[RMDB]
RNA sequence: GGGAACGACUCGAGUAGAGUCGAAAAGAGUUUUGCGUCUUUGCAGGUGAUCAAAGUGCGUGCUCACAUGUGGGUGCUCUGUUCCAUAGAAAGUUUCCUCUCCUGUAAUGCUACCCUGGCAACAUCACCGAGGUAAUGGCUUCGGCCAUUACCUCGGAAAAGAAACAACAACAACAAC
Reactivity to 2A3 in 0.01 (KOAc 150mM, MgCl2 10mM, bicine 150mM(pH8.5), 24C), signal-to-noise 1, nucleotides 027 to 126: g090a010g000u000u000u140u170g020c010g030u000c000u040u070u000g030c010a020g000g110u050g090a120u020c040a030a030a030g040u090g040c020g040u090g040c030u000c030a070c030a000u250g010u200g000g010g000u050g010c010u000c020u050g090u000u180c000c040a070u110a040g230a150a150a100g120u000u090u000c020c020u010c040u000c000c080u010g130u190a260a120u080g000c000u080a110c000c000c060u000g050g000c010a000a100c000a080u000c010a000